[RMDB]
RNA sequence: GGGAACGACUCGAGUAGAGUCGAAAACCUGUUGUUUAGCGUAUCGUUGCACUUGUCUGGUGGGAUUGUGGCAUUAAUUUGCCUGCUCAUCUAGGCAGUGGACAUAUGCUCAACACUGGGUAUAAUUCCUAUUUAUACAGUUCGCUGUAUAAAUAGGAAAAGAAACAACAACAACAAC
Reactivity to 2A3 in 0.01 (KOAc 150mM, MgCl2 10mM, bicine 150mM(pH8.5), 24C), signal-to-noise 7, nucleotides 027 to 126: c000c000u010g060u100u010g010u010u020u010a000g000c000g000u000a000u020c090g020u000u110g300c010a010c020u120u150g000u000c010u000g010g010u020g010g000g030a050u150u230g120u070g110g000c000a000u000u050a060a050u060u060u010g000c000c000u000g000c010u000c000a050u020c010u020a000g010g000c000a000g000u000g000g000a000c000a000u000a000u000g000c000u000c000a010a000c000a000c010u040g010g010g050u120a090u060a170a130u040u010
Reactivity to DMS in 0.01 (KOAc 150mM, MgCl2 10mM, bicine 150mM(pH8.5), 24C), signal-to-noise 2, nucleotides 027 to 126: c000c000u000g020u000u010g000u000u010u000a020g000c010g020u000a020u000c240g020u000u000g010c010a010c000u000u000g020u000c000u000g020g020u000g010g010g000a040u020u020g010u010g030g010c010a010u000u000a090a210u010u000u000g010c010c000u000g000c010u000c000a010u000c010u010a010g020g010c000a020g020u000g010g000a010c000a020u000a000u000g020c000u000c060a020a010c010a030c030u000g000g000g010u000a100u010a090a160u000u000
Source: RMDB library 15KREP, as collected in RNAgym. An RNA of 177 nucleotides, treated with 2A3 and DMS and read out base by base.